RNA sequence: GGGAACGACUCGAGUAGAGUCGAAAAUCUCUUCGCCGGGGGAGCUCCCUCCCCAUCCUUGUCCUUUCUUAUUAUUCCUCGGAUGUUCCCCAGCCAGGGAUUGUCCUCCUCGAGUCUCUUGAGAUUCAUACCACCUGCUUCGGCAGGUGGAAAAGAAACAACAACAACAAC
Reactivity to 2A3 in 0.01 (KOAc 150mM, MgCl2 10mM, bicine 150mM(pH8.5), 24C), signal-to-noise 3, nucleotides 027 to 129: u010c010u040c000u040u030c070g050c000c040g080g000g000g000g010a020g000c020u010c010c000c020u010c040c000c010c010a020u050c020c000u050u090g070u020c010c000u050u090u140c030u120u190a180u160u050a110u170u110c000c040u000c050g060g000a010u020g010u050u010c000c000c000c000a020g000c000c060a050g000g000g000a000u030u060g060u020c000c000u000c000c000u000c000g000a010g000u000c000u030c000u010u040g010a070g020a060u060u090c020a010u080a080
This 170-nucleotide RNA was probed chemically with 2A3. The 2A3 profile rests on 3,658 reads. Source: RMDB library 15KLIB, as collected in RNAgym.